[RMDB]
RNA sequence: GGGAACGACUCGAGUAGAGUCGAAAAAUGCGAGCCAAGGAGAGGUUCUAUUCAUCUACAGCUAUGGAGAUAAGGCCUCUGUUUGGGGAGAGCUUGCUUCCACAUGUGCAGGUGAGAAAGGAAUUGCCAUCAGGAUCGGAUUCGUCCGAUCCUGAUGAAAAGAAACAACAACAACAAC
Reactivity to DMS in 0.01 (KOAc 150mM, MgCl2 10mM, bicine 150mM(pH8.5), 24C), signal-to-noise 3, nucleotides 027 to 126: a040u010g020c020g000a300g020c000c010a000a030g000g010a020g000a010g000g020u010u040c000u000a170u050u020c100a040u000c020u030a060c100a110g000c250u020a120u020g000g030a050g010a050u000a090a070g000g000c010c000u000c000u000g010u020u030u000g000g000g040g010a120g000a140g000c030u000u000g000c030u020u010c010c000a040c160a080u010g000u040g000c050a070g000g000u000g000a080g000a060a080a080g030g010a060a080u010u010g020c180
Reactivity to 2A3 in 0.01 (KOAc 150mM, MgCl2 10mM, bicine 150mM(pH8.5), 24C), signal-to-noise 7, nucleotides 027 to 126: a020u190g010c040g000a020g050c000c000a030a020g050g020a010g010a000g020g030u160u170c010u040a090u040u070c060a140u010c050u090a180c060a120g060c040u170a130u210g030g020a040g000a030u080a110a050g030g000c000c000u000c000u090g300u030u000u040g020g000g040g020a140g010a000g050c010u030u010g000c010u050u020c020c010a110c030a140u140g060u110g020c040a030g060g020u040g050a090g110a060a050a040g040g100a080a080u080u110g030c000